[RMDB]
RNA sequence: GGGAACGACUCGAGUAGAGUCGAAAAAGAAAAGCGUAACAGCUUACCGGCCGAGGUUCGAGGCGCCCAAAAUGAUCGGGGCUCAAGUUCGCCACCGAGACCUAACGGCACGGGUAACACCGUGAUCCUCACGCCAUUCAUUCGUGAAUGGCGUGAGAAAAGAAACAACAACAACAAC
Reactivity to DMS in 0.01 (KOAc 150mM, MgCl2 10mM, bicine 150mM(pH8.5), 24C), signal-to-noise 1, nucleotides 027 to 126: a020g000a090a040a000a020g000c000g020u020a110a110c200a180g000c000u000u000a000c240c020g000g000c000c000g000a090g080g070u030u000c030g000a050g000g000c000g020c000c000c000a010a000a220a020u070g000a110u070c150g000g010g010g040c030u050c210a030a050g000u070u000c040g000c000c000a100c060c000g000a110g000a000c070c010u000a120a190c210g000g000c040a060c000g000g000g000u010a120a270c110a050c040c050g000u040g000a230u070c010
Reactivity to 2A3 in 0.01 (KOAc 150mM, MgCl2 10mM, bicine 150mM(pH8.5), 24C), signal-to-noise 2, nucleotides 027 to 126: a020g160a000a090a000a010g010c020g010u070a060a030c020a010g000c000u000u000a060c000c030g020g000c010c010g030a030g000g070u010u070c000g010a000g040g010c000g060c020c020c010a020a120a000a060u210g070a110u080c010g000g050g000g000c030u030c080a050a090g000u150u120c040g050c000c010a130c030c020g000a000g030a080c000c040u070a140a060c040g000g040c040a020c020g030g020g000u000a000a000c000a040c020c000g030u060g030a060u100c000